[RMDB]
RNA sequence: GGGAACGACUCGAGUAGAGUCGAAAACAGUGCAGCGUCAACUUCAACAACAAGUAUCUGGCAGGCGACAUUCUGAAAGCAAAGUGUGGCGCGAGCAUCUUCAUAGAGAUCACUGAUCUCCACACUGCUGUAUGAAAUAGUUCGCUAUUUCAUACAGAAAAGAAACAACAACAACAAC
Reactivity to 2A3 in 0.01 (KOAc 150mM, MgCl2 10mM, bicine 150mM(pH8.5), 24C), signal-to-noise 9, nucleotides 027 to 126: c040a010g020u020g030c020a020g010c010g030u030c020a030a030c020u070u060c030a090a090c010a040a020c010a100a070g060u050a130u090c060u070g060g000c010a020g050g010c030g060a040c020a040u130u070c040u090g090a130a050a020g040c070a090a030a070g050u150g020u030g080g000c020g000c010g010a010g010c010a020u050c020u120u040c020a090u130a140g030a000g010a020u020c040a060c300u140g010a030u010c040u000c030c000a030c000a000c020u130g020
Reactivity to DMS in 0.01 (KOAc 150mM, MgCl2 10mM, bicine 150mM(pH8.5), 24C), signal-to-noise 9, nucleotides 027 to 126: c100a090g020u000g010c030a200g010c030g020u000c040a060a060c030u000u000c070a080a090c130a080a070c120a070a080g010u010a060u000c060u000g010g010c040a050g000g010c070g010a050c080a070u000u010c070u010g010a070a080a100g020c150a070a050a040g010u000g020u000g010g000c080g010c080g010a090g010c070a030u000c050u000u010c150a110u010a100g010a030g000a020u000c020a120c150u010g010a050u000c010u000c000c110a040c100a060c100u010g010

The record gives the reactivity of an RNA of 177 nucleotides to 2A3 and DMS. For 2A3, 40,811 sequencing reads were counted. High 2A3 reactivity points to a flexible backbone, as in loops and unpaired stretches. 2A3 adducts were read by reverse transcription with SuperScript II with manganese. Source: RMDB library OK2TRN, as collected in RNAgym.